[RMDB]
RNA sequence: GGGAACGACUCGAGUAGAGUCGAAAAACAGCACGCGAGUCGUACGCGACUCGCGUGCUGAAGCCGAUGAUGUCUACUCCCGACUACGACACGCCGUGGGGAUGAGUUGAAGGCAUUUGGCUGAGAAGUCGUAAUACCUAUUCGUAGGUAUUACGACAAAAGAAACAACAACAACAAC
Reactivity to 2A3 in 0.01 (KOAc 150mM, MgCl2 10mM, bicine 150mM(pH8.5), 24C), signal-to-noise 2, nucleotides 027 to 126: a000c000a000g000c000a000c000g000c000g000a020g000u070c090g070u170a070c300g040c040g000a000c080u000c000g000c000g000u010g000c020u000g000a000a000g000c010c000g030a090u170g000a010u010g050u020c030u090a010c000u040c000c000c010g070a080c030u040a000c010g080a020c000a010c300g190c090c000g020u010g000g010g010g040a080u200g040a030g020u060u150g100a060a020g010g000c010a010u090u050u150g000g000c000u020g040a060g040a180a030